An RNA of 177 nucleotides, treated with DMS and 2A3 and read out base by base. For 2A3, 11,605 sequencing reads were counted. The data come from the RNA Mapping Database (RMDB), library VIROID.
RNA sequence: GGGAACGACUCGAGUAGAGUCGAAAACAUGUACAAUACCUAGUCGAUGAUGCACAACUCCAGGGACAACGUCAAAAGUACCGCCCUAUGUCUUGUCUCCUCGUGGUGUCGAAGCAAUGGCGGAGUCGAAGGUAACUAUGUUCGCAUAGUUACCUUCAAAAGAAACAACAACAACAAC
Reactivity to DMS in 0.01 (KOAc 150mM, MgCl2 10mM, bicine 150mM(pH8.5), 24C), signal-to-noise 6, nucleotides 027 to 126: c120a100u000g020u000a060c110a080a090u000a090c030c020u000a090g030u000c050g010a070u010g000a060u010g010c040a050c050a060a080c070u000c100c060a080g010g010g010a040c030a010a040c120g010u010c060a020a070a060a090g010u010a100c030c040g010c010c000c040u000a090u000g010u000c040u000u010g000u000c010u000c020c040u000c160g010u000g020g020u000g010u000c040g000a060a050g020c090a060a070u000g000g010c020g020g010a160g010u010c140
Reactivity to 2A3 in 0.01 (KOAc 150mM, MgCl2 10mM, bicine 150mM(pH8.5), 24C), signal-to-noise 6, nucleotides 027 to 126: c020a050u150g050u210a050c040a090a060u060a120c010c020u050a050g050u060c030g030a050u090g030a030u090g080c040a030c010a090a100c030u020c040c020a020g010g020g010a010c010a030a010c090g060u060c050a050a090a000a060g030u030a090c010c020g020c000c000c010u050a100u050g020u000c020u020u040g020u000c030u060c060c020u100c080g070u100g010g030u050g000u040c030g060a060a010g040c040a040a110u090g010g000c000g010g020a030g030u060c080